Chemical mapping of a 207-nucleotide RNA with 2A3. Conditions: 150 mM KOAc, 10 mM MgCl2 and 150 mM bicine (pH 8.5), 24 C. It was measured as part of the RMDB library M2RFPK. The 2A3 profile rests on 468 reads.
[RMDB]
RNA sequence: GGGAACGACUCGAGUAGAGUCGAAAAAGCAUGUUAGGUUCGCAUGGUGCACUAUUGUGUUAUUAGUAACUAAGUAAGCUUACAAUCGAAAAUGUUUAACCAUAAAAGGGUAUAAUGGUGUAAGACAGAUACCCUCUGAGCUUCGGCUCAGAGGGAACCAUGAUCCCCACUUCGGUGGGGAUCAUGGAAAAGAAACAACAACAACAAC
Reactivity to 2A3 in 0.01 (KOAc 150mM, MgCl2 10mM, bicine 150mM(pH8.5), 24C), signal-to-noise 1, nucleotides 027 to 156: a000g050c030a010u050g020u030u050a080g040g000u030u040c000g010c080a140u040g000g040u030g110c000a030c030u120a210u140u210g040u020g000u060u010a030u050u010a040g050u000a090a000c060u020a020a030g050u010a010a110g040c020u040u080a060c030a130a030u050c040g100a040a030a050a030u090g070u010u000u090a030a000c010c000a000u080a130a080a000a000g010g040g000u150a070u040a020a090u050g010g010u000g010u020a050a010g000a000c030a000g120a040u190a150c000c000c010u000c000u010g000a010g000c000u000u110c250g160g000c000u000c000a000g000a000g000g010g010a000a000